[RMDB]
RNA sequence: GGGAACGACUCGAGUAGAGUCGAAAAGUAGGUAGACCGCCUUCUAGCCUGCCCUGCGGUUGCAUUUAUGCCAUGACCCCGGAACGGGUCACAGUGCUGAAGCAAAGGCCGCAAGAAGGUUUUGUGGUAAAUGACUCGAAUUCGUUCGAGUCAUUUAAAAAGAAACAACAACAACAAC
Reactivity to 2A3 in 0.01 (KOAc 150mM, MgCl2 10mM, bicine 150mM(pH8.5), 24C), signal-to-noise 2, nucleotides 027 to 126: g060u060a030g000g010u030a040g080a170c020c100g010c010c000u020u050c020u020a070g030c010c030u010g010c030c010c010u000g010c000g010g010u030u050g010c070a110u000u040u100a080u300g000c000c010a010u070g000a000c030c000c010c040g070g050a130a050c030g020g000g010u020c000a010c020a010g200u250g000c020u000g030a020a010g000c020a120a070a190g170g000c000c000g000c010a010a030g000a020a020g020g030u040u030u200u200g060u100g040g010
Reactivity to DMS in 0.01 (KOAc 150mM, MgCl2 10mM, bicine 150mM(pH8.5), 24C), signal-to-noise 5, nucleotides 027 to 126: g010u010a020g000g020u000a080g010a160c110c090g010c030c030u000u000c010u000a140g010c010c010u000g020c060c030c020u000g020c010g000g020u000u010g010c020a120u000u000u000a010u010g010c000c030a240u000g000a010c000c000c000c030g020g070a130a190c300g000g000g000u000c000a000c130a040g020u000g010c000u010g010a040a030g000c020a080a130a230g010g010c010c020g000c030a030a040g000a220a030g010g000u010u010u000u000g020u010g010g010
This 177-nucleotide RNA was probed chemically with 2A3 and DMS. DMS adducts were read by reverse transcription with MarathonRT. It was measured as part of the RMDB library OK2TRN. For DMS, 6,271 sequencing reads were counted. The reactions ran in a buffer of 150 mM KOAc, 10 mM MgCl2 and 150 mM bicine (pH 8.5), at 24 C.